RNA sequence: GGGAACGACUCGAGUAGAGUCGAAAAUCAGGAGAAGGGCAGUCCUGUCCAAGGCCACACGGCUCAGUGCUAACACUCAGACUUCAGUGUUUUUAUCUCCCUCCUGGUCGCUUCCACCCUUAGUGCAUCUCUGGAGGCCCAAGGGAGCUAAAGGCCAUAACACCACUAUGUUCGCAUAGUGGUGUUAAAAAGAAACAACAACAACAAC
Reactivity to 2A3 in 0.01 (KOAc 150mM, MgCl2 10mM, bicine 150mM(pH8.5), 24C), signal-to-noise 3, nucleotides 027 to 156: u060c000a020g040g060a040g030a100a100g050g000g000c040a030g140u070c010c030u010g040u010c000c030a020a070g020g020c030c000a050c000a010c030g040g000c030u010c040a040g000u030g040c040u090a090a010c020a010c030u060c020a050g040a220c050u150u080c090a010g010u030g000u140u020u000u000u070a050u020c010u010c000c000c020u050c030c050u020g000g050u110c090g010c030u010u000c000c000a060c050c000c040u070u110a060g050u080g170c050a160u030c100u000c030u110g040g020a010g010g010c020c000c000a000a030g000g000g000a000g010c000u040a030a020a000g000g010c000c070a030
Reactivity to DMS in 0.01 (KOAc 150mM, MgCl2 10mM, bicine 150mM(pH8.5), 24C), signal-to-noise 2, nucleotides 027 to 156: u000c070a060g010g010a050g030a090a060g030g040g050c010a080g000u000c010c010u010g020u010c080c040a120a080g030g010c000c020a120c050a110c110g020g000c020u010c090a160g020u010g020c090u010a060a040c040a070c030u000c030a200g000a130c100u010u000c040a120g030u000g020u000u000u010u000u010a090u020c020u010c000c000c010u010c010c060u000g000g020u000c080g070c040u000u000c010c020a120c020c020c020u010u020a100g030u010g060c110a160u000c010u000c040u000g000g010a090g000g000c020c010c030a040a050g000g000g000a040g000c060u000a010a020a120g000g000c050c020a150

Source: RMDB library OK3TST, as collected in RNAgym. This 207-nucleotide RNA was probed chemically with 2A3 and DMS. For DMS, 3,358 sequencing reads were counted. The reactions ran in a buffer of 150 mM KOAc, 10 mM MgCl2 and 150 mM bicine (pH 8.5), at 24 C. For 2A3 the reverse transcriptase was SuperScript II with manganese.